[RMDB]
RNA sequence: GGGAACGACUCGAGUAGAGUCGAAAACGGCUUCGACGUGUAGUAAGCGUGCAGCAGACUGACCUGCCGAGCAGCCUGAUUCGCUUCGUAAAACCUGUCAGGAACUGUAACUGCGGACGAUUAUUCGUACGCGAUGGCGGCGUAACAGCCCCCAUCUCAACACAUUUUAGUUCGCUAAAAUGUGUUGAAAAGAAACAACAACAACAAC
Reactivity to DMS in 0.01 (KOAc 150mM, MgCl2 10mM, bicine 150mM(pH8.5), 24C), signal-to-noise 2, nucleotides 027 to 156: c020g050g030c040u010u000c040g000a090c020g050u000g020u000a130g020u000a050a080g000c050g000u000g020c060a070g000c030a050g010a300c040u000g010a060c080c010u010g050c080c010g000a150g000c030a070g090c010c000u020g000a090u010u010c040g010c050u000u000c140g030u010a060a040a070a050c010c000u010g040u000c010a050g060g040a050a070c050u010g020u010a040a090c070u010g040c000g010g000a060c010g010a070u000u000a230u000u000c010g020u000a040c030g010c000g010a080u010g000g030c120g010g020c010g020u000a060a090c060a140g010c030c010c010c010c000a210u000c030u000
Reactivity to 2A3 in 0.01 (KOAc 150mM, MgCl2 10mM, bicine 150mM(pH8.5), 24C), signal-to-noise 6, nucleotides 027 to 156: c030g030g020c020u070u070c060g090a050c040g050u040g030u100a100g050u070a100a020g040c040g020u070g030c030a020g000c000a010g050a100c040u060g060a090c010c020u040g020c050c010g040a040g030c030a000g040c000c010u050g010a090u090u070c060g010c030u080u060c030g060u060a010a010a040a100c000c010u040g020u030c030a030g010g050a060a050c020u060g040u120a060a040c030u070g000c010g000g010a000c000g010a010u110u080a090u300u160c010g000u010a010c010g000c010g000a010u030g000g000c010g000g000c030g000u040a080a030c020a050g010c010c000c000c000c000a010u010c010u000